[RMDB]
Source information:
Structure probing data (2A3 and DMS) for a 177-nucleotide construct. For 2A3, 2,309 sequencing reads were counted. The DMS profile rests on 884 reads.

RNA sequence: GGGAACGACUCGAGUAGAGUCGAAAAGAUAUGGACAGCGAGACCCGUCGCCGGUGAAAUACUCGGAAACGAGGAGACGCUCGUCUGUCCUAAGUCAAACAACACAACAGUUCGCUGUUGUGUUGAAGCACACUGAAAACUUCGGUUUUCAGUGUGCAAAAGAAACAACAACAACAAC
Reactivity to 2A3 in 0.01 (KOAc 150mM, MgCl2 10mM, bicine 150mM(pH8.5), 24C), signal-to-noise 1, nucleotides 027 to 126: g010a000u070a040u150g000g010a020c000a000g000c000g010a000g000a060c000c000c050g010u030c010g010c010c010g000g000u050g060a210a140a100u300a140c130u070c080g000g050a070a150a020c030g000a170g170g020a090g080a030c170g010c090u010c020g290u080c080u000g000u000c000c010u010a060a020g000u000c010a180a000a000c000a010a000c010a000c000a020a000c000a020g030u120u130c190g060c150u000g000u000u010g000u000g000u000u020g000a010a000
Reactivity to DMS in 0.01 (KOAc 150mM, MgCl2 10mM, bicine 150mM(pH8.5), 24C), signal-to-noise 2, nucleotides 027 to 126: g000a050u000a300u030g010g000a030c000a000g000c000g010a080g000a260c000c010c000g040u010c300g000c050c010g000g010u020g000a110a150a120u010a120c050u000c000g010g000a000a070a080c010g010a140g010g010a180g000a110c300g000c020u000c020g000u020c010u000g010u000c010c000u000a030a060g000u020c000a090a130a210c020a010a000c000a030c000a010a000c000a020g010u020u000c170g090c020u010g000u000u000g010u000g010u010u010g000a020a070
The RNA was probed in 150 mM KOAc, 10 mM MgCl2 and 150 mM bicine (pH 8.5) at 24 C. Values cover nucleotides 27 to 126.